An RNA of 177 nucleotides, treated with DMS and 2A3 and read out base by base. The DMS profile rests on 2,078 reads. The data come from the RNA Mapping Database (RMDB), library RFMREP. The reactions ran in a buffer of 150 mM KOAc, 10 mM MgCl2 and 150 mM bicine (pH 8.5), at 24 C. The 2A3 profile rests on 2,515 reads. 2A3 adducts were read by reverse transcription with SuperScript II with manganese.
[RMDB]
RNA sequence: GGGAACGACUCGAGUAGAGUCGAAAAACGUCGCCGCUCGCCGCUCCGCCCGGAUGCCGCCGGCUCGUCACGGACUCGCGCGUAACCCUCCUCCGCUUCAUCGGUUACGCACAAGCUGUUCGACCCAGCUUAAAAGCUAGUUCGCUAGCUUUUAAGCAAAAGAAACAACAACAACAAC
Reactivity to DMS in 0.01 (KOAc 150mM, MgCl2 10mM, bicine 150mM(pH8.5), 24C), signal-to-noise 2, nucleotides 027 to 126: a080c070g020u000c070g010c040c030g020c110u000c050g030c040c070g000c060u000c020c060g000c090c070c070g000g000a080u010g020c060c030g000c090c040g010g020c040u000c030g010u000c060a110c070g000g000a080c050u000c120g010c050g000c010g010u000a040a020c010c000c060u010c040c050u000c050c020g000c120u000u000c090a070u010c110g000g000u010u000a030c020g040c030a060c060a030a050g000c040u010g020u000u000c020g000a190c020c030c010a100
Reactivity to 2A3 in 0.01 (KOAc 150mM, MgCl2 10mM, bicine 150mM(pH8.5), 24C), signal-to-noise 2, nucleotides 027 to 126: a000c020g040u010c010g020c020c000g000c050u080c030g000c000c000g040c000u000c010c020g050c060c040c000g050g010a080u120g020c000c020g020c020c000g010g030c010u000c000g010u030c020a040c080g050g010a030c030u020c070g030c000g020c020g040u020a030a040c010c030c000u060c020c020u040c020c000g060c090u180u080c040a160u140c050g030g000u010u030a010c010g010c020a000c000a010a050g000c040u000g010u010u000c000g020a040c000c000c000a020